The record gives the reactivity of an RNA of 207 nucleotides to 2A3 and DMS. The RNA was probed in 150 mM KOAc, 10 mM MgCl2 and 150 mM bicine (pH 8.5) at 24 C. Source: RMDB library OK3TST, as collected in RNAgym.
RNA sequence: GGGAACGACUCGAGUAGAGUCGAAAAAUUAGGGGUAGAGAAUUCUGUAGAUGUCUAUUAGGUCUGCUUGGUGCAGAGCUGAGUUCAAGUCCUGGAUAUCCUUGUUAACCUUCUAUCUCAUUGAUCUGUUGAAUAUUGACAGUGGGAUGUUAAAGUACGUAGCUAAAUUAUUCGUAAUUUAGCUACGAAAAGAAACAACAACAACAAC
Reactivity to 2A3 in 0.01 (KOAc 150mM, MgCl2 10mM, bicine 150mM(pH8.5), 24C), signal-to-noise 4, nucleotides 027 to 156: a010u130u110a050g010g010g010g010u060a030g030a020g040a130a110u170u070c060u130g050u070a040g010a100u050g020u040c040u050a100u110u160a110g010g020u000c020u000g000c020u030u080g060g020u100g000c020a010g010a030g140c040u040g030a020g030u030u080c050a060a020g000u000c020c000u010g000g000a020u030a030u060c030c000u060u050g040u070u060a050a070c010c000u070u120c040u080a040u020c010u000c020a020u000u060g060a210u030c050u010g090u100u120g160a170a080u190a120u190u190g010a000c000a010g010u020g010g020g000a020u020g020u070u160a080a070a010g030u040a020
Reactivity to DMS in 0.01 (KOAc 150mM, MgCl2 10mM, bicine 150mM(pH8.5), 24C), signal-to-noise 2, nucleotides 027 to 156: a120u000u010a070g020g020g030g020u010a070g010a120g010a050a090u000u000c060u020g020u000a060g010a070u000g020u000c040u000a100u010u010a050g010g040u000c020u010g010c040u000u010g020g000u000g000c080a120g010a150g000c020u000g010a060g000u010u000c040a050a090g020u010c020c000u000g000g020a070u000a040u010c030c000u000u000g030u000u000a070a060c030c010u000u000c070u010a070u000c010u010c030a080u000u000g000a120u010c030u000g020u010u000g010a100a130u010a110u010u000g020a030c020a040g040u000g010g010g030a050u010g000u000u000a040a040a100g010u000a120